[RMDB]
RNA sequence: GGGAACGACUCGAGUAGAGUCGAAAAGACUGCGUGCACUUGAGACGAUAUCGAGCCGGAAAUUAAUCGAUAAUGUCUCUUGUAGUGGAUACGAUCCGGCAAGUAUCGACUACCUGUGCUCGUAGGACGAGUGACGUAUAUUCGUAUACGUCACUCGAAAAGAAACAACAACAACAAC
Reactivity to DMS in 0.01 (KOAc 150mM, MgCl2 10mM, bicine 150mM(pH8.5), 24C), signal-to-noise 3, nucleotides 027 to 126: g000a160c020u010g000c000g000u000g000c000a020c000u040u000g000a000g000a020c010g010a130u010a000u000c000g020a100g000c000c020g020g000a090a130a090u020u050a090a090u000c030g000a030u010a030a050u030g000u000c000u000c000u020u030g020u010a010g010u010g010g000a010u000a010c020g000a140u010c000c020g000g000c000a110a180g000u000a000u000c000g000a030c010u010a030c010c300u020g010u000g010c000u010c010g000u010a000g010g000a170
Reactivity to 2A3 in 0.01 (KOAc 150mM, MgCl2 10mM, bicine 150mM(pH8.5), 24C), signal-to-noise 9, nucleotides 027 to 126: g040a030c000u000g000c000g010u010g000c010a010c000u040u050g010a000g000a010c020g020a030u000a000u080c010g000a010g000c000c010g010g120a070a110a060u300u280a090a160u100c010g010a010u020a050a080u130g030u000c000u010c010u050u190g030u020a010g010u030g130g000a000u000a020c000g010a030u010c000c000g010g000c040a070a010g000u000a000u010c030g080a010c000u030a060c000c050u040g000u000g000c000u000c000g000u000a000g010g000a010